[RMDB]
RNA sequence: GGGAACGACUCGAGUAGAGUCGAAAAGACGCUUGACGAGAUCAUCGAUGGCUUGCGUGACCGGUUCGCGCUGUUGACCGGCGGUGCGCGCACGGCCGCGCACCGGCAGCAGACGCUGUGGGCCUCGCACGCUUUUCAUCUUCGGAUGAAAAGCGUGAAAAGAAACAACAACAACAAC
Reactivity to 2A3 in 0.01 (KOAc 150mM, MgCl2 10mM, bicine 150mM(pH8.5), 24C), signal-to-noise 1, nucleotides 027 to 126: g140a010c000g040c040u080u050g030a090c050g020a000g030a250u050c040a050u060c110g030a080u020g100g020c020u040u030g050c000g020u010g030a070c020c090g040g020u130u080c000g000c000g000c070u070g020u010u060g030a300c060c000g050g000c050g000g200u060g010c000g000c040g000c000a110c230g070g030c170c000g000c000g100c000a010c000c010g000g000c000a000g010c000a000g100a160c050g020c050u090g060u130g050g050g010c000c010u060c080g020
The record gives the reactivity of an RNA of 177 nucleotides to 2A3. The RNA was probed in 150 mM KOAc, 10 mM MgCl2 and 150 mM bicine (pH 8.5) at 24 C. The 2A3 profile rests on 664 reads. 2A3 adducts were read by reverse transcription with SuperScript II with manganese. It was measured as part of the RMDB library OK1LIB.